[RMDB]
RNA sequence: GGGAACGACUCGAGUAGAGUCGAAAAGCCACACCCGAAGUCGUUACCCUAACCCUUAUGGGAGGGGGAUGCCGAAGGUAGGGCUAGUGACUGGGGUGAAGUCGUAACAAGGUAGCCGUACCGGAAGUGGCCUAAGUUUAUUCGUAAACUUAGGCCAAAAAGAAACAACAACAACAAC
Reactivity to 2A3 in 0.01 (KOAc 150mM, MgCl2 10mM, bicine 150mM(pH8.5), 24C), signal-to-noise 1, nucleotides 027 to 126: g080c040c000a000c010a010c060c060c000g060a070a030g020u010c010g020u040u120a300c000c000c000u060a070a070c060c000c000u100u260a150u300g200g000g000a010g030g020g000g000g000a030u130g000c000c000g020a030a000g000g000u060a050g020g060g000c020u010a030g110u040g130a020c000u060g030g100g000g120u040g060a030a000g030u000c050g000u170a100a020c040a140a090g060g040u020a000g050c030c030g090u000a040c000c000g020g060a050a020g070
Reactivity to DMS in 0.01 (KOAc 150mM, MgCl2 10mM, bicine 150mM(pH8.5), 24C), signal-to-noise 3, nucleotides 027 to 126: g010c020c020a160c080a050c010c000c000g020a110a050g010u000c010g020u000u000a140c010c000c000u010a110a210c020c010c030u010u000a130u010g010g010g040a300g000g010g010g000g020a090u010g020c010c000g000a220a080g000g010u000a070g010g000g030c120u020a020g000u000g000a040c030u000g000g010g030g020u010g000a040a040g000u000c010g020u000a090a090c160a110a110g000g010u000a010g020c070c050g000u010a030c040c030g000g010a130a080g010
Chemical mapping of a 177-nucleotide RNA with 2A3 and DMS. 2A3 adducts were read by reverse transcription with SuperScript II with manganese. For DMS the reverse transcriptase was MarathonRT. The DMS profile rests on 2,566 reads. It was measured as part of the RMDB library OK2TRN.